[RMDB]
RNA sequence: GGGAACGACUCGAGUAGAGUCGAAAAGAAGUGGCAGGGACAUGCCCCACAAGCUCGUUCUAGCAACAUAUGUUUGGCUAGUUCGAGCGAUUAGUCUGGAGGAGCGUCCUCUCGCCUAUUCACGAGACCUCCUAUACCUAUUCGUAGGUAUAGGAGGAAAAGAAACAACAACAACAAC
Reactivity to 2A3 in 0.01 (KOAc 150mM, MgCl2 10mM, bicine 150mM(pH8.5), 24C), signal-to-noise 9, nucleotides 027 to 126: g030a020a000g050u040g010g020c010a010g010g000g010a010c010a030u240g080c010c000c000c000a030c010a020a030g000c000u000c000g010u010u000c000u000a000g010c010a010a060c030a100u300a100u300g150u110u090u090g180g030c000u000a000g010u000u010c000g000a000g000c000g000a010u000u040a030g040u040c130u080g040g040a190g060g010a090g060c060g010u000c000c000u050c010u010c030g000c000c000u020a110u010u050c050a050c110g100a070g070a080
Reactivity to DMS in 0.01 (KOAc 150mM, MgCl2 10mM, bicine 150mM(pH8.5), 24C), signal-to-noise 5, nucleotides 027 to 126: g000a030a030g010u000g020g030c010a090g000g000g020a010c010a120u020g020c020c020c000c000a030c080a060a110g010c010u000c010g000u000u000c000u000a010g000c000a060a030c020a230u040a120u060g010u020u010u030g000g000c000u000a000g000u000u000c010g000a000g000c000g000a020u030u030a030g020u040c200u020g000g000a120g020g010a120g000c100g000u000c000c000u020c030u010c170g020c000c000u000a130u010u010c020a150c110g000a150g010a190
This 177-nucleotide RNA was probed chemically with 2A3 and DMS. Conditions: 150 mM KOAc, 10 mM MgCl2 and 150 mM bicine (pH 8.5), 24 C. The 2A3 profile rests on 34,220 reads. Source: RMDB library OK1LIB, as collected in RNAgym.